[RMDB]
RNA sequence: GGGAACGACUCGAGUAGAGUCGAAAACGAACUUCUCCUGGAUGACUUCGUACUGCAUGCAGGUAUUGUGCCAGUACUUUGCGUUGUCCUUCAGAUGAAUCACCUCUUCUUCGAAGUCUUCAUCCACGCAUGCCCAUCAGUUCGCUGAUGGGCAUGCAAAAGAAACAACAACAACAAC
Reactivity to 2A3 in 0.01 (KOAc 150mM, MgCl2 10mM, bicine 150mM(pH8.5), 24C), signal-to-noise 2, nucleotides 027 to 126: c030g050a020a030c030u040u030c030u000c000c010u010g000g030a010u010g030a050c010u000u010c050g000u020a040c000u000g070c020a180u110g000c000a030g170g000u260a280u120u160g120u200g040c000c040a000g000u010a030c000u100u030u060g060c080g020u060u070g000u050c000c000u000u020c000a040g000a070u080g020a030a060u060c010a050c040c000u050c000u020u000c020u120u040c040g070a110a000g000u000c040u010u060c020a110u060c000c000a100c030